[RMDB]
RNA sequence: GGGAACGACUCGAGUAGAGUCGAAAAUUCGCGUUGACUGCGAUUCGUAGGUCACGUCUACGUUAAAACGUCACAGUUAAAUUAUAACUGCAAAUAACGAAAAUUCUUACGCAGUAGCUGCUUAGUCAGGCUGCGUGAUCCAAUGACGGAUUGCUCGCUGAUAAGAUUUCUUCGGAAAUCUUAUCAGAAAAGAAACAACAACAACAAC
Reactivity to 2A3 in 0.01 (KOAc 150mM, MgCl2 10mM, bicine 150mM(pH8.5), 24C), signal-to-noise 8, nucleotides 027 to 156: u060u020c000g000c000g020u020u040g030a030c020u020g000c010g060a090u030u030c000g000u010a010g010g030u080c060a020c100g070u000c010u000a000c000g020u020u040a010a030a010a020c040g000u010c010a010c000a020g000u020u040a080a160a250u300u170a190u120a200a000c000u010g010c060a040a060a130u180a120a050c090g090a060a040a040a100u130u050c030u040u050a010c000g000c000a020g020u050a140g150c000u010g000c020u100u100a050g090u280c000a000g000g010c000u000g000c000g000u000g010a000u000c010c010a070a100u170g050a090c080g000g020a030u000u070g050c040u050c100g030
Reactivity to DMS in 0.01 (KOAc 150mM, MgCl2 10mM, bicine 150mM(pH8.5), 24C), signal-to-noise 3, nucleotides 027 to 156: u000u000c030g060c070g000u000u000g020a090c050u020g030c010g010a240u000u000c040g020u020a060g020g000u000c100a090c190g000u000c010u000a070c010g040u000u000a040a070a060a080c050g040u000c020a060c000a040g020u000u000a030a150a230u000u000a150u000a040a050c020u000g010c010a050a110a170u000a070a080c070g010a060a060a070a140u000u010c040u000u000a030c000g010c050a020g010u000a080g040c000u000g000c010u010u000a170g020u000c030a060g020g000c020u010g000c000g000u000g010a020u000c050c040a050a100u010g010a100c050g010g000a140u000u000g020c020u000c080g010